[RMDB]
RNA sequence: GGGAACGACUCGAGUAGAGUCGAAAAAGCUUGCUACAUGUAACUGAUCAAAAAGGAAAUGAAAAUAAUUCGCGCACUUCCGGCUAUGAGACUCUCGGUACAUUAAUUACAUUCAGUUCCGACUCAGUCUUACCUAUGAUAGCUAACGUUCUUUCGACACCGAUAAAUAUUUCGAUAUUUAUCGGUGAAAAGAAACAACAACAACAAC
Reactivity to DMS in 0.01 (KOAc 150mM, MgCl2 10mM, bicine 150mM(pH8.5), 24C), signal-to-noise 2, nucleotides 027 to 156: a090g030c040u010u000g040c020u010a090c050a050u000g000u000a090a090c030u000g030a030u000c050a030a090a170a110a140g010g020a070a050a060u010g020a040a070a090a120u010a060a150u010u000c050g020c080g020c030a020c040u000u000c070c030g030g030c050u000a100u010g010a120g010a030c030u010c010u000c030g000g020u000a060c050a040u000u000a030a180u000u000a060c080a170u000u000c050a080g030u010u010c000c040g020a070c050u000c010a040g020u000c040u010u000a150c040c060u000a100u010g020a180u000a040g050c020u000a030a070c090g050u000u000c000u000u000u010c030g060a200
Reactivity to 2A3 in 0.01 (KOAc 150mM, MgCl2 10mM, bicine 150mM(pH8.5), 24C), signal-to-noise 5, nucleotides 027 to 156: a000g030c060u080u090g010c000u020a020c010a060u070g020u060a060a070c030u060g050a060u150c100a040a060a040a050a080g040g010a050a060a100u100g030a040a100a050a040u130a060a110u110u060c050g000c010g010c040a030c060u070u020c020c030g040g010c010u060a070u080g050a040g020a060c000u020c020u020c070g000g010u040a010c010a040u140u180a120a090u140u110a090c060a060u070u140c060a030g000u030u040c000c000g010a020c020u010c050a000g020u000c000u060u070a060c000c010u050a060u130g090a120u060a060g040c050u040a070a010c050g040u010u000c010u000u030u030c050g040a030
Structure probing data (DMS and 2A3) for a 207-nucleotide construct. It was measured as part of the RMDB library OK3TST. Values cover nucleotides 27 to 156. In probing experiments dimethyl sulfate is read out at A N1 and C N3, which are open when not base-paired. The RNA was probed in 150 mM KOAc, 10 mM MgCl2 and 150 mM bicine (pH 8.5) at 24 C.